An RNA of 207 nucleotides, treated with DMS and 2A3 and read out base by base.
Reactivities are rounded to 0.1 and cut off at 0 and 3.
The reactions ran in a buffer of 150 mM KOAc, 10 mM MgCl2 and 150 mM bicine (pH 8.5), at 24 C.
Source: RMDB library OK3TST, as collected in RNAgym.
For 2A3 the reverse transcriptase was SuperScript II with manganese.
[RMDB]
RNA sequence: GGGAACGACUCGAGUAGAGUCGAAAAACGAGGCAACCGGAGAAUAUUACCGAUGGGAUGGUGCAUUUCCUAAGGCUGUAGCUGCUGGUUCAACUCCUGCAUCAACUGGUGGCGUUGGUUUAGGCGCGUGGAUUAGUGUUGGUGACGCAGCAUUUAGAUCAUUCACAACAUUCGUGUUGUGAAUGAUAAAAGAAACAACAACAACAAC
Reactivity to DMS in 0.01 (KOAc 150mM, MgCl2 10mM, bicine 150mM(pH8.5), 24C), signal-to-noise 2, nucleotides 027 to 156: a070c060g000a070g010g020c040a100a110c040c030g000g030a150g020a120a070u000a090u010u000a050c060c000g050a170u000g010g010g020a080u010g020g030u000g000c040a140u000u010u000c030c020u010a110a160g010g040c010u000g040u000a090g060c030u010g020c010u010g000g020u010u000c060a040a080c040u000c030c000u010g000c080a100u010c020a050a070c030u000g040g020u000g000g020c030g000u010u000g010g010u000u000u010a100g010g000c070g020c080g000u000g000g010a140u000u010a050g010u010g020u000u010g010g010u010g000a140c100g030c050a110g000c040a160u000u010u010a120g000
Reactivity to 2A3 in 0.01 (KOAc 150mM, MgCl2 10mM, bicine 150mM(pH8.5), 24C), signal-to-noise 3, nucleotides 027 to 156: a000c040g000a030g050g020c030a040a030c060c040g030g030a050g040a110a060u170a080u210u110a110c040c070g040a080u130g010g020g050a040u060g050g000u050g040c030a050u030u030u030c000c000u050a040a010g040g000c040u030g040u110a010g000c040u050g010c000u010g000g050u050u060c020a050a050c040u020c020c040u030g000c010a040u020c030a060a020c040u040g000g040u060g050g000c040g030u020u060g050g040u010u050u080a060g010g000c020g000c040g070u050g010g030a060u060u070a070g020u020g020u100u060g050g010u010g010a030c050g000c040a020g010c010a020u080u140u110a090g010